[RMDB]
RNA sequence: GGGAACGACUCGAGUAGAGUCGAAAACUGCGUACUAGUGAUGUUGAAGACUGAGCCGGUUUACAGUAUCUUACGCAUACACUACUUGUAAACUAGACCGUAUUAGUCUUGGAACAUUAGUAGUGCAGGAUCUCUGAGAAUUCGUUCUUGGAGAUCCAAAAGAAACAACAACAACAAC
Reactivity to 2A3 in 0.01 (KOAc 150mM, MgCl2 10mM, bicine 150mM(pH8.5), 24C), signal-to-noise 9, nucleotides 027 to 126: c010u040g010c020g020u010a010c000u010a020g120u000g030a030u010g020u020u020g070a010a000g000a000c010u010g010a000g040c030c010g020g010u010u010u020a020c020a020g010u010a030u020c050u090u110a050c090g030c050a040u080a050c070a020c030u110a030c020u080u120g030u080a010a040a030c010u020a060g050a050c030c010g020u050a210u050u060a020g000u000c000u000u020g080g130a010a000c000a000u000u000a010g170u000a000g010u010g010c010a010
Reactivity to DMS in 0.01 (KOAc 150mM, MgCl2 10mM, bicine 150mM(pH8.5), 24C), signal-to-noise 6, nucleotides 027 to 126: c020u010g000c140g020u010a020c020u000a010g000u000g000a040u000g010u000u010g010a030a010g000a030c000u000g000a030g010c070c010g000g010u000u000u000a010c090a050g010u000a020u010c070u030u040a090c230g020c250a070u020a050c130a100c150u010a030c090u020u020g010u010a020a050a090c230u010a060g020a040c020c040g000u000a040u010u010a020g010u000c000u000u000g010g030a050a030c010a010u010u000a030g000u000a000g010u000g020c020a120